The record gives the reactivity of an RNA of 177 nucleotides to DMS. The RNA was probed in 150 mM KOAc, 10 mM MgCl2 and 150 mM bicine (pH 8.5) at 24 C.
[RMDB]
RNA sequence: GGGAACGACUCGAGUAGAGUCGAAAACAGAUCGCGCAGCAGGUCGAGCCAGUCUUGCUUCAAUUGGCGCGCCGUCCUCAAUGGCCAGAAACCGCUUCUGCCCGCGUUCGUCACGCCGAUCAGCACAACGUGGGAUGGUGUUCGCACCAUCCCACGUAAAAGAAACAACAACAACAAC
Reactivity to DMS in 0.01 (KOAc 150mM, MgCl2 10mM, bicine 150mM(pH8.5), 24C), signal-to-noise 1, nucleotides 027 to 126: c160a040g000a020u020c040g020c060g050c070a090g010c040a040g000g040u000c020g020a200g040c010c080a100g010u000c040u010u000g010c070u000u020c260a080a130u010u000g020g020c020g000c020g050c030c030g000u000c010c040u000c050a090a050u060g030g030c050c010a090g000a000a110a090c180c080g010c050u000u000c080u020g000c040c010c040g000c090g000u010u000c050g000u020c050a030c090g040c060c030g010a030u000c030a020g040c110a060c140a020